[RMDB]
RNA sequence: GGGAACGACUCGAGUAGAGUCGAAAAACGGUGCGGAAGUUCGCGCUUCGGUGAAACGCGAAAAUCGGACGGUGGCUGCAAGUCGCAUCGCAAAACCGCGGCAAGUGGAGUUAGCGAGAGGAGGCUGAAACCAUCCAACACUUCGGUGUUGGAUGAAGUACAGUAUGUUCUUCGGAACAUACUGUACAAAAGAAACAACAACAACAAC
Reactivity to 2A3 in 0.01 (KOAc 150mM, MgCl2 10mM, bicine 150mM(pH8.5), 24C), signal-to-noise 3, nucleotides 027 to 156: a000c050g030g000u040g000c030g030g010a060a030g060u040u060c010g000c010g000c080u080u060c020g070g030u110g060a090a030a010c060g000c030g020a010a020a000a100u100c040g020g010a020c030g030g050u050g050g000c020u060g020c080a060a020g020u040c020g000c040a030u020c030g000c040a060a110a000a010c040c030g000c020g070g000c070a090a070g040u060g060g030a070g010u070u070a020g040c050g040a040g000a010g030g040a020g010g030c030u050g030a040a040a020c030c000a000u010c000c000a000a000c000a000c010u050u100c200g110g010u000g000u000u000g000g010a000u000g000a010a000
Reactivity to DMS in 0.01 (KOAc 150mM, MgCl2 10mM, bicine 150mM(pH8.5), 24C), signal-to-noise 2, nucleotides 027 to 156: a010c040g040g030u000g040c000g030g010a090a170g040u000u000c030g030c000g020c030u000u000c010g000g050u000g020a070a070a020c020g000c000g010a040a030a080a100u000c040g010g020a050c060g000g010u010g010g020c020u010g040c000a080a090g030u000c030g010c020a260u000c010g060c040a060a070a090a060c030c080g030c030g010g030c040a050a080g030u000g030g000a140g040u000u000a140g040c050g000a090g030a080g050g010a130g010g010c010u000g000a150a070a160c120c000a000u010c000c000a000a020c000a020c000u000u000c300g040g000u000g020u010u000g020g000a000u000g020a020a150